[RMDB]
Structure probing data (2A3 and DMS) for a 207-nucleotide construct.
The data come from the RNA Mapping Database (RMDB), library ARCHII.
DMS adducts were read by reverse transcription with MarathonRT.
The RNA was probed in 150 mM KOAc, 10 mM MgCl2 and 150 mM bicine (pH 8.5) at 24 C.
As a SHAPE reagent, 2A3 marks flexible, mostly unpaired nucleotides at the ribose 2'-OH.
RNA sequence: GGGAACGACUCGAGUAGAGUCGAAAAGGGCCCAAGCCGCAAGGUGGAAGGCUGAGACGUCAUGCACAUCGGCUGGUUGCUCGUCGGGUCACUCGGCGUUCAACGAGACUCAGUGACUGGCGUUGUCCGUAGCGUGCUUCUGCGCGACGGCGGCGUGCACAAAACUAUGCUUCGGCAUAGUUUUGUGAAAAGAAACAACAACAACAAC
Reactivity to 2A3 in 0.01 (KOAc 150mM, MgCl2 10mM, bicine 150mM(pH8.5), 24C), signal-to-noise 5, nucleotides 027 to 156: g060g030g020c010c000c000a010a010g020c020c000g040c050a090a030g040g020u030g010g040a080a040g020g000c020u030g030a040g000a020c020g000u010c010a020u240g060c030a010c010a090u160c090g020g000c020u050g060g000u010u030g000c000u000c010g020u000c000g020g020g050u250c050a130c180u020c010g000g000c000g000u020u010c000a000a020c050g120a010g050a070c040u060c170a030g020u020g060a180c030u020g020g000c000g000u000u050g040u000c000c010g020u010a020g020c010g020u040g070c120u170u170c090u290g010c060g000c030g020a040c010g020g000c000g000g000c030g030u100g020
Reactivity to DMS in 0.01 (KOAc 150mM, MgCl2 10mM, bicine 150mM(pH8.5), 24C), signal-to-noise 2, nucleotides 027 to 156: g020g000g010c000c030c040a130a290g020c010c030g040c230a100a130g030g020u000g020g000a090a170g010g010c020u010g020a190g000a050c040g030u010c020a060u000g020c020a300c020a090u000c040g040g030c020u000g000g030u000u000g000c020u000c060g050u000c030g000g030g010u020c080a110c020u000c050g020g000c050g020u010u000c050a010a070c060g000a060g010a080c030u000c020a160g030u000g010a060c010u040g020g000c020g010u000u000g000u010c020c020g020u010a050g000c030g000u000g010c170u010u010c150u000g020c000g000c010g000a010c030g030g030c020g000g010c030g050u000g020